[RMDB]
RNA sequence: GGGAACGACUCGAGUAGAGUCGAAAACUAUGGAUGCCACCGUGACGGCUCAAUCACACAAGUGCCAACGAUAACGAGGCGCUCGCUAUUGCUGCGUAACUGACGGCCUGACGGUCUGACGUUACAAAAAACGAAAAGUGGUUCGCCACUUUUCGAAGUAACGUAAGGUGUUCGCACCUUACGUUACAAAAGAAACAACAACAACAAC
Reactivity to 2A3 in 0.01 (KOAc 150mM, MgCl2 10mM, bicine 150mM(pH8.5), 24C), signal-to-noise 4, nucleotides 027 to 156: c040u050a080u190g090g010a040u080g030c000c040a050c040c060g070u080g040a050c080g010g010c010u020c070a050a110u130c030a020c020a030c010a140a050g030u030g010c020c010a100a070c090g080a110u080a180a040c060g020a060g070g000c010g030c030u030c040g020c040u060a100u150u150g060c070u100g020c030g030u020a030a020c010u010g020a010c020g000g000c000c000u130g100a060c120g000g000u000c000u000g010a000c020g000u020u000a020c010a010a030a010a010a000a000c020g000a000a020a000a000g000u010g010g020u010u040c180g030c030c000a010c000u000u000u010u010c000g000a060a000
Reactivity to DMS in 0.01 (KOAc 150mM, MgCl2 10mM, bicine 150mM(pH8.5), 24C), signal-to-noise 1, nucleotides 027 to 156: c000u000a100u000g020g000a060u020g010c020c060a110c050c050g010u000g070a050c090g050g050c020u000c050a110a080u000c070a070c070a110c040a080a090g010u000g070c020c000a090a090c090g030a270u000a080a200c020g020a220g000g070c050g000c000u000c000g030c020u020a020u010u000g000c000u010g040c030g050u000a050a050c010u010g000a300c300g000g000c000c000u020g020a180c270g050g000u000c010u000g020a300c300g000u020u070a010c040a020a070a030a000a060a190c000g000a010a000a020a010g070u040g060g010u000u000c300g010c000c000a010c010u000u010u010u060c000g000a000a150